[RMDB]
RNA sequence: GGGAACGACUCGAGUAGAGUCGAAAACUUGGUGAAUCUGAUGAUUAUGUGUUUUGGGGUUGCUCUUCUUGAGGAGUAUCUUUGUGGUGUUCUCUGUAUUUCCUGAAUCUGAAUGUGGGCCUGUCUUGCGGGUUGGGCAAGUUCUCCUGGAUAAUAAACUACUAAAUGAGUUCGCUCAUUUAGUAGUAAAAGAAACAACAACAACAAC
Reactivity to 2A3 in 0.01 (KOAc 150mM, MgCl2 10mM, bicine 150mM(pH8.5), 24C), signal-to-noise 3, nucleotides 027 to 156: c030u060u070g020g000u050g070a060a030u070c030u070g020a040u050g030a050u110u110a080u180g060u000g060u000u040u050u110g020g000g000g020u040u080g030c020u000c000u100u010c010u040u070g040a060g010g010a020g050u060a050u060c050u050u090u080g080u080g010g050u020g010u050u030c050u000c040u010g040u070a080u040u090u070c020c000u030g050a080a080u070c040u070g050a120a080u080g000u040g010g000g030c020c010u040g020u060c020u000u040g000c050g000g050g000u030u010g020g030g020c010a020a000g010u030u010c050u010c030c010u030g040g030a000u090a130a000u220a130a090
Reactivity to DMS in 0.01 (KOAc 150mM, MgCl2 10mM, bicine 150mM(pH8.5), 24C), signal-to-noise 2, nucleotides 027 to 156: c050u000u000g010g040u010g010a100a120u000c030u000g030a110u010g010a100u000u000a090u020g030u010g000u010u020u010u010g020g000g000g010u010u000g000c030u000c050u010u000c030u000u010g010a090g040g000a130g030u000a050u000c030u000u000u000g020u000g020g000u000g020u000u000c030u000c030u000g010u000a100u010u000u000c020c050u000g020a090a080u030c050u000g010a050a120u010g030u010g000g020g030c010c030u010g020u000c040u000u000g030c070g020g030g040u010u000g000g000g040c060a030a060g020u000u000c010u000c010c030u000g010g020a120u000a050a090u000a090a090
This 207-nucleotide RNA was probed chemically with 2A3 and DMS. DMS adducts were read by reverse transcription with MarathonRT. The reactions ran in a buffer of 150 mM KOAc, 10 mM MgCl2 and 150 mM bicine (pH 8.5), at 24 C.